RNA sequence: GGGAACGACUCGAGUAGAGUCGAAAAGAUAUGGAGCGGUACAGGGUGAUGACCUCGGAAACGAGCAAGCCCGUACCCGCUCCUAAGUCAAAAGACUAGUUCAUGGGUUCGCCCAUGAACUAGUCAACAUAUAAUCAGGCUUCGGCCUGAUUAUAUGAAAAGAAACAACAACAACAAC
Reactivity to 2A3 in 0.01 (KOAc 150mM, MgCl2 10mM, bicine 150mM(pH8.5), 24C), signal-to-noise 2, nucleotides 027 to 126: g010a000u080a040u160g000g000a010g010c020g010g040u020a040c120a300g040g010g030u030g040a300u170g050a060c010c000u000c010g020g030a080a080a030c010g010a010g000c020a050a050g000c000c000c000g000u000a010c000c000c000g000c000u000c000c000u000a060a020g030u010c030a000a040a050a140g000a000c000u010a010g010u000u000c000a000u010g000g010g070u080u100c280g100c050c000c000a000u020g010a010a000c000u000a000g000u010c000a000a000
Reactivity to DMS in 0.01 (KOAc 150mM, MgCl2 10mM, bicine 150mM(pH8.5), 24C), signal-to-noise 5, nucleotides 027 to 126: g000a050u010a300u000g010g000a000g020c000g010g010u010a020c010a150g040g000g020u000g010a100u010g000a080c300c000u000c010g000g000a080a120a170c010g000a010g010c030a070a250g000c000c000c000g000u000a010c090c040c050g000c000u010c000c000u000a010a050g000u000c040a100a090a120a120g000a010c000u000a000g000u000u000c000a010u000g000g000g000u000u010c280g010c000c000c000a010u000g000a000a000c000u000a000g000u000c000a030a090

The data come from the RNA Mapping Database (RMDB), library TTRDEL. Chemical mapping of a 177-nucleotide RNA with 2A3 and DMS. The DMS profile rests on 6,418 reads. The reactions ran in a buffer of 150 mM KOAc, 10 mM MgCl2 and 150 mM bicine (pH 8.5), at 24 C. For DMS the reverse transcriptase was MarathonRT. For 2A3 the reverse transcriptase was SuperScript II with manganese. High 2A3 reactivity points to a flexible backbone, as in loops and unpaired stretches.